This 207-nucleotide RNA was probed chemically with 2A3 and DMS. The RNA was probed in 150 mM KOAc, 10 mM MgCl2 and 150 mM bicine (pH 8.5) at 24 C. Values cover nucleotides 27 to 156. In probing experiments dimethyl sulfate is read out at A N1 and C N3, which are open when not base-paired.

[RMDB]
RNA sequence: GGGAACGACUCGAGUAGAGUCGAAAAAGCCAGAAGAUCUAGAUAAUUGGGUGGAUGUUUGUUUGAAUAAGUAUUACUCUGAGGCAAAACACAUCACAUUUAAUUGUGAAUUUGAUGAUCAUAUUAGGCCUAGGAUUGCACCCUUUUCUGUUGGAGAGCUACUAUUAGUAUUCGUACUAAUAGUAGCAAAAGAAACAACAACAACAAC
Reactivity to 2A3 in 0.01 (KOAc 150mM, MgCl2 10mM, bicine 150mM(pH8.5), 24C), signal-to-noise 4, nucleotides 027 to 156: a010g050c040c010a040g060a090a020g010a030u050c030u110a020g040a170u090a100a040u080u060g020g020g000u000g000g050a050u020g070u090u100u060g060u050u060u070g080a060a050u130a150a000g050u060a120u180u090a060c040u040c060u130g080a040g060g000c020a040a030a100a000c040a010c010a020u000c000a010c000a110u060u130u110a140a180u140u070g040u040g080a070a110u080u030u050g040a060u050g010a000u040c040a000u080a080u270u080a050g020g010c030c010u030a040g060g010a090u070u120g040c020a080c000c000c000u010u030u050u040c060u020g010u020u020g020g030a110g020a040
Reactivity to DMS in 0.01 (KOAc 150mM, MgCl2 10mM, bicine 150mM(pH8.5), 24C), signal-to-noise 3, nucleotides 027 to 156: a040g000c030c040a130g020a150a140g010a080u000c020u000a200g010a150u010a040a060u000u000g010g000g040u050g000g010a080u000g020u010u000u000g020u000u000u000g010a070a110u000a050a080g020u000a110u010u010a090c080u000c030u000g030a160g020g000c050a080a040a030a070c070a080c050a130u000c030a090c020a050u000u000u000a060a060u000u000g030u000g020a070a120u000u000u000g000a100u000g000a050u000c040a070u010a170u000u000a130g030g000c000c020u010a090g010g000a100u000u000g010c060a150c020c010c010u000u000u000u000c050u000g000u000u000g020g010a120g020a170